RNA sequence: GGGAACGACUCGAGUAGAGUCGAAAAAUGAUUCGUAGUGUAAGACGAUCGACAGUCAUCGCAUGCCAGCAGGACCACCAAAGGAAUACGCUUCGGUAACUACUCGAGAUCCCAAGCGAUAAAACAAGUAGUUAUUACCCUUCGGGGUAAUAACUACAAAAGAAACAACAACAACAAC
Reactivity to DMS in 0.01 (KOAc 150mM, MgCl2 10mM, bicine 150mM(pH8.5), 24C), signal-to-noise 1, nucleotides 027 to 126: a080u000g010a090u000u000c050g000u000a040g060u000g010u020a030a020g010a070c030g000a060u000c010g050a110c110a050g010u000c010a020u020c110g000c040a040u000g000c070c040a010g020c060a080g000g020a070c070c050a060c000c020a000a100a060g000g000a040a080u000a080c060g020c130u000u010c030g000g050u000a020a140c000u000a030c000u000c000g000a000g020a100u000c010c000c000a130a100g020c240g010a140u010a010a040a040a060c160a080a120